[RMDB]
Chemical mapping of a 170-nucleotide RNA with 2A3 and DMS. The data come from the RNA Mapping Database (RMDB), library 15KLIB.
RNA sequence: GGGAACGACUCGAGUAGAGUCGAAAAGACACAGAAUGUUACUGUUAAACCUAAGAGGUUACGCAAAAAGCGUAAUGUUGACCCUUUGUCCAAUUUUGAACAUAAGGUUAUUACAGAGUGCGUUACCGAAUCCUACUGUUCGCAGUAGGAAAAAGAAACAACAACAACAAC
Reactivity to 2A3 in 0.01 (KOAc 150mM, MgCl2 10mM, bicine 150mM(pH8.5), 24C), signal-to-noise 9, nucleotides 027 to 129: g020a000c040a000c000a060g100a130a190u150g050u150u200a070c020u000g020u030u070a080a070a030c000c000u030a080a020g080a060g110g000u010u020a000c000g000c010a000a040a040a070a040g180c070g020u010a010a010u060g060u090u140g050a060c010c000c000u010u010u010g010u010c010c030a090a140u120u080u120u220g050a060a010c010a000u140a050a030g020g000u040u070a030u030u020a010c010a010g070a030g170u040g010c000g000u000u040a000c000c000g020a010a030
Reactivity to DMS in 0.01 (KOAc 150mM, MgCl2 10mM, bicine 150mM(pH8.5), 24C), signal-to-noise 9, nucleotides 027 to 129: g000a120c150a020c020a040g030a100a150u050g040u030u030a090c020u000g000u010u000a050a060a080c010c030u050a070a090g040a260g020g020u020u000a000c000g000c000a020a020a050a080a060g010c000g030u000a030a040u030g000u030u050g010a030c110c000c030u000u000u000g020u020c020c010a050a180u000u020u020u010g030a080a020c000a020u000a070a030g000g000u020u030a030u010u000a030c010a090g000a100g030u000g000c000g000u000u050a040c000c000g040a120a070

Values cover nucleotides 27 to 129. For 2A3 the reverse transcriptase was SuperScript II with manganese.